[RMDB]
RNA sequence: GGGAACGACUCGAGUAGAGUCGAAAAGAUAUGGAACGGAAGCUUGGACCGUACGGUUUCGGAAACGAAAUUACGCUAGCCCGUUCCUAAGUCGCGCCUCAUUAAACGCUUCGGCGUUUAAUGAGAACUUAGUCUUGUCGUUCGCGACAAGACUAAGAAAAGAAACAACAACAACAAC
Reactivity to 2A3 in 0.01 (KOAc 150mM, MgCl2 10mM, bicine 150mM(pH8.5), 24C), signal-to-noise 2, nucleotides 027 to 126: g000a000u020a000u080g000g000a010a000c010g010g070a300a140g040c030u140u300g080g090a300c080c020g030u050a020c120g270g000u000u000u060c000g020g000a000a010a010c000g000a000a000a030u130u020a010c040g000c090u010a010g010c020c010c010g000u030u000c000c000u010a020a010g010u000c020g000c010g080c080c010u050c000a000u020u000a000a010a010c010g000c020u070u130c300g130g000c010g000u000u000u000a000a000u000g010a000g000a020a000
Reactivity to DMS in 0.01 (KOAc 150mM, MgCl2 10mM, bicine 150mM(pH8.5), 24C), signal-to-noise 4, nucleotides 027 to 126: g000a020u010a140u010g000g020a020a030c000g010g000a090a080g030c020u000u030g040g000a130c290c020g000u020a010c300g010g000u000u010u010c000g000g000a060a060a090c010g010a010a000a020u010u000a030c010g020c000u000a010g000c030c010c000g010u000u000c000c000u000a010a070g000u000c010g000c200g010c190c020u000c010a000u000u000a000a000a010c000g000c010u000u010c190g030g000c020g030u000u000u000a000a000u000g010a000g000a010a110
About this RNA
This 177-nucleotide RNA was probed chemically with 2A3 and DMS. The DMS profile rests on 2,508 reads. The reactions ran in a buffer of 150 mM KOAc, 10 mM MgCl2 and 150 mM bicine (pH 8.5), at 24 C.